RNA sequence: GGGAACGACUCGAGUAGAGUCGAAAAAGGCUACAUUUGGUCGCUCACUGAGGGCAUUCAUGCUCCGGUCAUGCGCCUGUGUGUCGGCGGCACCGAACAAUGUUGUGAGACGGACGGGGCCGGGAAAUGUAAACUCGGGUCGACUGAGAUCAUUGUGUAAAUAUACCCUGUUCGCAGGGUAUAUUUAAAAAGAAACAACAACAACAAC
Reactivity to 2A3 in 0.01 (KOAc 150mM, MgCl2 10mM, bicine 150mM(pH8.5), 24C), signal-to-noise 2, nucleotides 027 to 156: a000g000g010c040u060a000c010a010u250u160u140g090g000u300c050g000c030u050c060a030c010u000g020a300g110g000g000c040a050u130u190c070a090u270g000c020u030c070c020g030g010u030c040a030u170g030c000g030c020c020u040g000u000g000u000g010u010c030g020g090c010g010g020c010a010c010c040g030a190a060c070a180a120u210g030u100u050g070u100g060a110g000a050c030g000g030a010c010g020g000g000g000c000c000g040g020g000a030a130a060u170g030u120a080a050a000c000u010c000g000g010g030u020c030g050a040c020u050g030a090g000a120u140c060a120u110u180g040u030g010
Reactivity to DMS in 0.01 (KOAc 150mM, MgCl2 10mM, bicine 150mM(pH8.5), 24C), signal-to-noise 1, nucleotides 027 to 156: a060g000g030c030u000a020c020a030u000u020u040g020g000u010c200g050c020u000c160a050c040u000g000a220g040g010g010c030a120u000u060c130a090u010g000c000u010c030c010g010g040u000c030a050u000g030c050g010c040c030u030g000u020g040u010g020u000c030g010g000c040g010g020c020a150c000c010g080a140a130c110a120a140u010g010u020u000g020u010g000a170g000a100c010g010g010a180c030g010g000g030g010c000c020g010g000g010a030a040a060u000g000u000a190a100a040c020u010c010g030g020g010u000c040g010a120c030u000g010a090g020a110u000c070a090u010u000g010u000g000
The data come from the RNA Mapping Database (RMDB), library OK3TST. This 207-nucleotide RNA was probed chemically with 2A3 and DMS. The RNA was probed in 150 mM KOAc, 10 mM MgCl2 and 150 mM bicine (pH 8.5) at 24 C. DMS adducts were read by reverse transcription with MarathonRT.